RNA sequence: GGGAACGACUCGAGUAGAGUCGAAAAGCCUUACGAUUCGUCGUAAGGCAUACAAAGUUUUGGCACUAUGAGCCCGCUGCGUUGGUGCUCCCACGCGGUGCAAUACGACGGAUUUCGAUCCGUCGAACUCAAGUGUGCCAUUCGUGGCACACUUGAGAAAAGAAACAACAACAACAAC
Reactivity to 2A3 in 0.01 (KOAc 150mM, MgCl2 10mM, bicine 150mM(pH8.5), 24C), signal-to-noise 1, nucleotides 027 to 126: g000c020c000u020u000a000c000g010a020u010u060c170g080u020c000g000u140a000a000g000g000c000a000u020a010c050a000a070a030g020u000u040u110u130g010g020c020a010c060u150a100u300g120a020g000c020c020c030g000c010u000g000c000g030u070u120g040g000u130g090c040u180c010c000c000a000c000g040c000g000g000u010g060c000a030a020u210a080c010g000a000c010g020g030a020u040u040u180c190g080a030u040c000c000g000u000c000g000a050a010
Reactivity to DMS in 0.01 (KOAc 150mM, MgCl2 10mM, bicine 150mM(pH8.5), 24C), signal-to-noise 2, nucleotides 027 to 126: g000c000c000u000u000a000c010g010a030u010u010c250g020u000c000g020u000a020a040g000g000c000a000u000a030c160a120a070a140g020u010u000u000u030g010g000c010a070c090u010a150u010g000a080g040c000c070c030g000c010u000g010c080g010u010u020g010g010u000g000c300u050c080c000c040a030c010g020c010g000g040u000g000c140a090a150u000a130c010g020a020c010g020g000a030u000u000u030c150g000a060u000c000c000g000u000c000g010a020a100
Chemical mapping of a 177-nucleotide RNA with 2A3 and DMS. The DMS profile rests on 1,029 reads. For 2A3 the reverse transcriptase was SuperScript II with manganese. DMS adducts were read by reverse transcription with MarathonRT. It was measured as part of the RMDB library M2PK50.